An RNA of 177 nucleotides, treated with DMS and 2A3 and read out base by base. Values cover nucleotides 27 to 126.
RNA sequence: GGGAACGACUCGAGUAGAGUCGAAAAGAUAUGGACCCAGAACUACUCCGAUUCUUUGCAUCGAUCAACGUGUUUACUCGGAAACGAGUAAACACGUUGGGAGCAAAGAGGAGCUGGGUCCUAAGUCCACUAAGUAGCUCUUCGGAGCUACUUAGUGAAAAGAAACAACAACAACAAC
Reactivity to DMS in 0.01 (KOAc 150mM, MgCl2 10mM, bicine 150mM(pH8.5), 24C), signal-to-noise 2, nucleotides 027 to 126: g030a120u010a300u000g010g000a020c010c000c000a010g000a070a040c080u020a300c000u000c010c000g000a300u020u020c010u000u020u010g000c000a300u000c150g000a130u020c020a000a000c020g030u000g000u000u000u000a010c000u000c010g000g000a150a070a300c010g000a020g010u010a000a000a000c000a000c010g000u000u000g000g000g000a050g010c020a000a000a010g000a080g000g020a030g020c000u000g010g000g000u000c000c000u000a000a140g000u000c080
Reactivity to 2A3 in 0.01 (KOAc 150mM, MgCl2 10mM, bicine 150mM(pH8.5), 24C), signal-to-noise 2, nucleotides 027 to 126: g050a030u180a040u220g050g000a000c010c010c010a000g100a190a030c300u300a110c000u080c030c020g300a300u300u190c000u100u000u000g010c110a300u300c130g170a120u120c070a020a000c010g000u000g000u030u000u000a040c040u010c010g000g050a070a030a010c020g010a000g000u000a010a000a000c010a010c000g000u000u000g020g000g000a020g050c000a000a000a000g010a020g000g000a000g030c000u010g000g000g000u030c020c000u010a010a000g020u010c010
For DMS, 1,804 sequencing reads were counted. 2A3 adducts were read by reverse transcription with SuperScript II with manganese. For 2A3, 1,865 sequencing reads were counted.